Source information
This 177-nucleotide RNA was probed chemically with DMS. The RNA was probed in 150 mM KOAc, 10 mM MgCl2 and 150 mM bicine (pH 8.5) at 24 C.
RNA sequence: GGGAACGACUCGAGUAGAGUCGAAAAGAUAUGGAAGGAGACAUGCUCAGGAGGGUAUCUCGGAAACGAGCCGAGCCCUACUGAGCAACAGCUCCUUCCUAAGUCAAAACGUAGGUUCGCCUACGAACACAGUUAAGGGCUUCGGCCCUUAACUGUGAAAAGAAACAACAACAACAAC
Reactivity to DMS in 0.01 (KOAc 150mM, MgCl2 10mM, bicine 150mM(pH8.5), 24C), signal-to-noise 1, nucleotides 027 to 126: g000a010u010a300u000g000g000a000a000g010g000a030g000a010c070a190u020g000c000u000c000a020g000g000a040g000g000g010u000a080u010c000u000c000g000g000a060a050a060c150g010a020g000c300c090g010a090g000c000c000c000u000a020c000u000g000a000g020c010a000a020c220a070g020c020u000c000c020u000u040c000c000u000a020a050g000u020c030a080a070a150a080c020g040u010a020g000g020u000u020c300g030c010c000u010a000c000g000a090a150
DMS adducts were read by reverse transcription with MarathonRT.